Structure probing data (DMS and 2A3) for a 177-nucleotide construct. DMS (dimethyl sulfate) methylates the pairing face of unpaired adenines and cytosines. The DMS profile rests on 22,083 reads. The RNA was probed in 150 mM KOAc, 10 mM MgCl2 and 150 mM bicine (pH 8.5) at 24 C. For 2A3 the reverse transcriptase was SuperScript II with manganese.

RNA sequence: GGGAACGACUCGAGUAGAGUCGAAAAGAAAGAAAGCCGAAGCAGCCAAAGAGGUCAAACGUCAGUAUAUCGGGCGUAAAUACUACAUUAUGCAGAAAGCCGACCUCAAUGUCGUAAAGAAAGAAAAAUCAUAUAUACGUUUCGACGUAUAUAUGAUAAAAGAAACAACAACAACAAC
Reactivity to DMS in 0.01 (KOAc 150mM, MgCl2 10mM, bicine 150mM(pH8.5), 24C), signal-to-noise 9, nucleotides 027 to 126: g010a110a100a120g000a090a100a090g020c030c030g030a100a090g010c080a070g000c070c050a060a070a170g010a050g010g010u010c040a070a090a060c050g020u000c050a040g020u020a120u020a100u030c050g010g000g000c020g020u010a050a080a070u020a060c070u010a050c080a100u020u020a070u030g020c050a050g020a070a090a090g010c140c130g000a020c020c020u010c020a050a110u020g010u010c030g000u020a050a080a090g010a070a090a080g010a020a060a050a060
Reactivity to 2A3 in 0.01 (KOAc 150mM, MgCl2 10mM, bicine 150mM(pH8.5), 24C), signal-to-noise 9, nucleotides 027 to 126: g080a010a090a000g060a070a070a010g010c020c010g050a050a010g030c050a000g010c010c020a060a060a020g040a010g010g020u040c040a070a030a020c020g020u020c020a030g080u030a090u050a070u300c050g030g020g000c010g010u040a040a060a060u140a050c040u040a010c020a100u130u140a070u290g050c040a020g110a080a040a010g060c040c040g020a020c000c000u030c030a010a030u070g010u010c010g010u060a080a110a030g100a040a070a020g130a030a090a080a010